[RMDB]
RNA sequence: GGGAACGACUCGAGUAGAGUCGAAAAGAUAUGGAGUUAUGGGAGGAACUACAAUUUAAACUCGGAAACGAGUUUAAUGAUUGCCGUUGAUCAUAACUCCUAAGUCAAACGGCCCUUCGGGGCCGAACCCGUAAUUAAAGUUCGCUUUAAUUACGGGAAAAGAAACAACAACAACAAC
Reactivity to DMS in 0.01 (KOAc 150mM, MgCl2 10mM, bicine 150mM(pH8.5), 24C), signal-to-noise 2, nucleotides 027 to 126: g000a020u000a190u010g000g000a000g020u000u000a010u000g000g000g010a020g030g010a140a100c230u000a150c110a070a060u000u000u000a000a000a010c010u000c010g000g000a020a030a090c000g000a010g010u000u000u000a000a010u000g000a170u000u010g010c000c010g000u010u000g000a020u000c010a010u000a020a000c000u010c000c000u000a010a040g000u000c010a070a100a300c010g000g010c010c000c010u000u030c180g020g000g000g010c000c000g000a010a020
Reactivity to 2A3 in 0.01 (KOAc 150mM, MgCl2 10mM, bicine 150mM(pH8.5), 24C), signal-to-noise 2, nucleotides 027 to 126: g000a000u000a000u090g000g010a000g010u000u010a010u000g020g020g020a060g040g010a060a060c130u250a150c300a040a010u000u000u030a010a010a000c000u000c000g000g000a040a030a010c000g010a010g010u010u000u010a010a010u030g080a030u060u300g030c000c010g160u210u010g000a000u010c010a010u000a000a000c000u000c010c000u000a020a020g010u010c000a000a130a270c030g020g030c000c020c010u030u040c210g030g010g010g020c020c000g000a010a030
Annotation:
Chemical mapping of a 177-nucleotide RNA with DMS and 2A3. The RNA was probed in 150 mM KOAc, 10 mM MgCl2 and 150 mM bicine (pH 8.5) at 24 C. DMS adducts were read by reverse transcription with MarathonRT. For 2A3 the reverse transcriptase was SuperScript II with manganese.